This 207-nucleotide RNA was probed chemically with 2A3 and DMS.
The 2A3 profile rests on 2,114 reads.

RNA sequence: GGGAACGACUCGAGUAGAGUCGAAAACUUCCGCGUUCGCGCGGAAGAAAAAGAUAUGGAGCGUCUCGUAUGGAGCCUAGUGGACUCGGAAACGAGUCCAUAGGCUAUGAAGUACGAGAGCGCUCCUAAGUCAAAAAGCGAAUAUUCGUAUUCGCAAUAAUCCUUACAUGUUCGCAUGUAAGGAUUAAAAAGAAACAACAACAACAAC
Reactivity to 2A3 in 0.01 (KOAc 150mM, MgCl2 10mM, bicine 150mM(pH8.5), 24C), signal-to-noise 1, nucleotides 027 to 156: c000u000u000c020c000g010c000g020u030u060c190g010c000g010c000g090g000a000a000g020a020a000a000a000a010g050a040u050a020u080g000g000a000g000c000g030u040c000u010c000g010u000a010u030g030g020a010g000c000c000u100a120g180u060g060g000a000c000u000c000g010g040a050a050a040c010g000a000g000u010c000c000a000u000a000g010g030c000u020a050u020g010a010a000g010u020a000c010g010a000g000a000g010c000g000c020u000c000c010u000a000a010g000u000c020a040a040a000a200a060g000c000g020a000a020u010a030u050u180c220g000u050a040u000u000c000g030c000a000a000
Reactivity to DMS in 0.01 (KOAc 150mM, MgCl2 10mM, bicine 150mM(pH8.5), 24C), signal-to-noise 2, nucleotides 027 to 156: c010u000u000c010c030g020c010g040u000u010c270g060c020g070c000g000g010a010a010g000a000a050a060a170a150g010a180u000a220u000g030g000a030g040c000g050u000c020u000c000g010u010a030u020g000g000a030g020c000c010u000a020g070u010g060g010a030c000u000c010g000g000a150a110a260c000g010a020g000u000c000c000a010u000a000g000g000c000u000a020u010g020a160a270g020u000a010c020g000a050g000a110g000c000g040c000u030c020c000u000a010a070g010u020c040a060a100a100a140a210g000c000g000a040a020u000a040u000u000c300g030u000a030u000u000c000g010c030a090a050

Annotation: For DMS, 4,129 sequencing reads were counted.